This 177-nucleotide RNA was probed chemically with DMS and 2A3. Conditions: 150 mM KOAc, 10 mM MgCl2 and 150 mM bicine (pH 8.5), 24 C. For 2A3 the reverse transcriptase was SuperScript II with manganese. The data come from the RNA Mapping Database (RMDB), library OK2TST.
RNA sequence: GGGAACGACUCGAGUAGAGUCGAAAACAGGAAGACGGCUCCCACAUACAGCAUCAGGCGACGUGGCGGGAGGGACACAGACUAAGUUCCACAGGGUACAGAGGACAAAGAAUCGAGUUCAGCCACGGGCGAUAAUUUAGUUCGCUAAAUUAUCGCCAAAAGAAACAACAACAACAAC
Reactivity to DMS in 0.01 (KOAc 150mM, MgCl2 10mM, bicine 150mM(pH8.5), 24C), signal-to-noise 2, nucleotides 027 to 126: c110a050g010g000a150a080g020a040c040g000g040c080u000c010c010c030a120c100a150u000a080c120a110g020c020a130u000c130a110g020g050c020g020a040c120g060u000g010g050c030g010g050g000a040g020g020g000a070c040a070c070a070g010a050c110u000a080a170g010u000u000c030c000a040c070a050g000g000g000u000a060c080a100g030a130g020g030a060c070a010a030a060g000a050a060u010c090g020a070g010u000u000c020a130g020c000c070a100c140g010
Reactivity to 2A3 in 0.01 (KOAc 150mM, MgCl2 10mM, bicine 150mM(pH8.5), 24C), signal-to-noise 1, nucleotides 027 to 126: c040a020g060g090a090a030g120a040c090g120g010c080u060c030c130c000a000c010a010u240a010c020a040g040c000a050u080c030a140g170g000c060g000a050c010g060u040g000g030c030g040g030g010a060g020g000g000a010c030a000c000a050g110a050c060u120a130a020g000u000u090c030c010a020c060a030g070g000g000u060a020c020a030g090a030g050g050a010c060a050a060a050g020a010a030u120c020g010a040g100u060u100c070a020g070c040c010a060c040g030